This 207-nucleotide RNA was probed chemically with 2A3 and DMS. The RNA was probed in 150 mM KOAc, 10 mM MgCl2 and 150 mM bicine (pH 8.5) at 24 C. Source: RMDB library OK3TST, as collected in RNAgym. 2A3 adducts were read by reverse transcription with SuperScript II with manganese.
RNA sequence: GGGAACGACUCGAGUAGAGUCGAAAAACAACAGAUAGCUGGAACCAGCGUAGAAUUCUACGCAUAUCCAUAGCGAAUGGUACCUGUAAAGAAAAUAAAAGUGGAUGUACAAGUACCAACAGCCGCUUAUGCCAUGGUGAUGUCAAUCACAUAUGCAGGUCCUAUAAUACUUCGGUAUUAUAGGACCAAAAGAAACAACAACAACAAC
Reactivity to 2A3 in 0.01 (KOAc 150mM, MgCl2 10mM, bicine 150mM(pH8.5), 24C), signal-to-noise 5, nucleotides 027 to 156: a000c050a030a000c050a060g180a130u150a050g030c010u010g060g030a100a100c080c070a030g000c000g000u010a010g080a170a260u300u140c000u000a000c000g000c010a000u040a020u040c010c010a020u110a010g010c000g030a040a040u040g000g000u000a010c000c000u010g000u000a010a120a040g120a110a110a030a040u260a060a060a030a000g160u100g100g060a030u050g010u020a020c010a030a030g020u000a000c000c000a010a020c020a040g050c010c000g040c010u110u070a030u140g020c040c020a030u050g030g040u000g010a010u020g120u170c080a070a020u040c000a010c000a040u090a030u080g070c080a050
Reactivity to DMS in 0.01 (KOAc 150mM, MgCl2 10mM, bicine 150mM(pH8.5), 24C), signal-to-noise 1, nucleotides 027 to 156: a120c030a050a070c030a080g010a070u010a050g020c000u000g010g000a120a120c170c080a140g040c040g000u000a010g010a270a210u020u040c010u010a020c000g010c040a100u000a120u000c030c070a090u000a060g000c000g000a230a160u000g000g030u020a010c010c020u000g030u000a020a050a140g030a140a100a000a130u000a080a090a090a250g000u010g040g030a150u000g000u010a020c030a010a010g000u000a000c000c010a030a100c050a190g000c030c050g030c000u000u010a120u000g010c000c080a030u010g000g020u000g010a060u000g010u010c140a020a120u010c000a040c000a080u020a090u000g010c010a070